[RMDB]
RNA sequence: GGGAACGACUCGAGUAGAGUCGAAAAAUCGAUGCGCUGCAACAUGUUAUCCAGAAGUUGGAUCUUGUCGCUCACUUUCGCUCCACCAACGAUAGCAACCAGCGGACGCGGCGGGUUACCAAGUACCUAAGUAACCCUCCUUCGGGAGGGUUACUUAAAAAGAAACAACAACAACAAC
Reactivity to DMS in 0.01 (KOAc 150mM, MgCl2 10mM, bicine 150mM(pH8.5), 24C), signal-to-noise 1, nucleotides 027 to 126: a040u030c030g050a150u060g000c000g000c000u020g010c030a070a010c170a030u000g000u000u000a030u010c080c090a050g030a050a190g020u020u000g000g000a050u000c000u000u000g000u000c160g000c060u010c060a130c220u000u050u000c020g000c030u000c020c120a020c020c050a030a080c100g030a050u000a000g020c120a050a060c130c030a020g000c020g010g000a210c100g050c000g000g000c070g000g030g010u000u010a130c080c050a040a040g030u000a090c010c080
Reactivity to 2A3 in 0.01 (KOAc 150mM, MgCl2 10mM, bicine 150mM(pH8.5), 24C), signal-to-noise 2, nucleotides 027 to 126: a000u090c060g010a000u060g020c040g000c010u070g020c000a000a010c000a110u050g010u000u050a030u070c040c070a040g080a200a030g230u190u120g000g010a000u000c060u010u100g090u040c030g000c070u050c010a020c020u010u180u110c050g000c000u000c030c000a030c000c070a080a050c060g000a040u070a060g050c030a070a050c000c000a010g000c030g070g000a000c030g020c020g050g010c020g000g070g000u010u010a020c040c000a010a050g100u070a080c020c000
This 177-nucleotide RNA was probed chemically with DMS and 2A3. The data come from the RNA Mapping Database (RMDB), library OK1LIB. For 2A3, 688 sequencing reads were counted.